[RMDB]
Conditions: 150 mM KOAc, 10 mM MgCl2 and 150 mM bicine (pH 8.5), 24 C. This 170-nucleotide RNA was probed chemically with 2A3. 2A3 adducts were read by reverse transcription with SuperScript II with manganese. The data come from the RNA Mapping Database (RMDB), library 15KLIB. As a SHAPE reagent, 2A3 marks flexible, mostly unpaired nucleotides at the ribose 2'-OH.
RNA sequence: GGGAACGACUCGAGUAGAGUCGAAAAAAGCUAUAUUUAGGUGGUAUGAGCUACUUUUGUGUAGAUCAUAGACCUGUGUGUAGUUUUCCACUUUGCGCUAAUGGUCUUGUAUUCGGCUUAUACAAGAAAAGCAAGCCCUUCGGGGCUUGCAAAAGAAACAACAACAACAAC
Reactivity to 2A3 in 0.01 (KOAc 150mM, MgCl2 10mM, bicine 150mM(pH8.5), 24C), signal-to-noise 2, nucleotides 027 to 129: a000a000g000c000u000a000u000a010u060u050u130a060g000g010u020g000g180u000a010u010g000a020g010c000u010a000c020u150u150u200u300g300u160g000u030a000g030a010u040c000a000u010a000g040a000c000c000u000g000u000g000u000g020u010a000g000u010u000u000u040c000c000a020c000u030u000u050g010c010g000c000u010a070a000u020g090g030u030c000u020u000g030u030a050u040u020c050g090g000c070u060u010a020u060a020c010a000a000g000a090a080a010a000